[RMDB]
RNA sequence: GGGAACGACUCGAGUAGAGUCGAAAAUUCUUGCUUCUCAAGUUCAGCACGACGAGCUUCGAAAGCAGCAGUGUUAGCUUCAGUAGCUGCAACUGCUUUACCUUGAGGGAUAAGGAAGUUACGGCCAAGUAUACCCAUAUUUCGAUAUGGGUAUACUAAAAGAAACAACAACAACAAC
Reactivity to DMS in 0.01 (KOAc 150mM, MgCl2 10mM, bicine 150mM(pH8.5), 24C), signal-to-noise 9, nucleotides 027 to 126: u000u000c020u000u000g010c040u000u000c030u000c020a030a030g010u000u000c130a060g020c040a060c120g010a210c250g000a060g000c020u000u000c100g010a090a060a050g010c030a080g010c110a100g020u000g020u000u010a070g010c010u000u000c200a170g010u000a040g010c000u000g010c040a040a150c170u000g000c000u000u000u010a050c140c010u000u000g010a070g010g000g000a060u000a030a040g000g000a020a040g000u000u010a080c150g000g000c020c060a090
Reactivity to 2A3 in 0.01 (KOAc 150mM, MgCl2 10mM, bicine 150mM(pH8.5), 24C), signal-to-noise 9, nucleotides 027 to 126: u030u000c010u000u030g030c000u080u070c020u000c030a010a020g020u070u070c030a020g030c040a030c080g140a040c070g060a040g020c020u060u080c070g090a080a020a010g010c010a010g020c030a040g040u040g030u270u290a010g020c000u070u070c090a160g040u170a010g030c010u050g020c020a070a090c020u000g000c000u020u030u020a040c010c010u010u020g040a040g010g040g030a070u050a100a020g030g010a030a020g020u060u120a070c080g080g000c020c010a030

This 177-nucleotide RNA was probed chemically with DMS and 2A3. The RNA was probed in 150 mM KOAc, 10 mM MgCl2 and 150 mM bicine (pH 8.5) at 24 C. 2A3 adducts were read by reverse transcription with SuperScript II with manganese. DMS adducts were read by reverse transcription with MarathonRT. The 2A3 profile rests on 25,173 reads.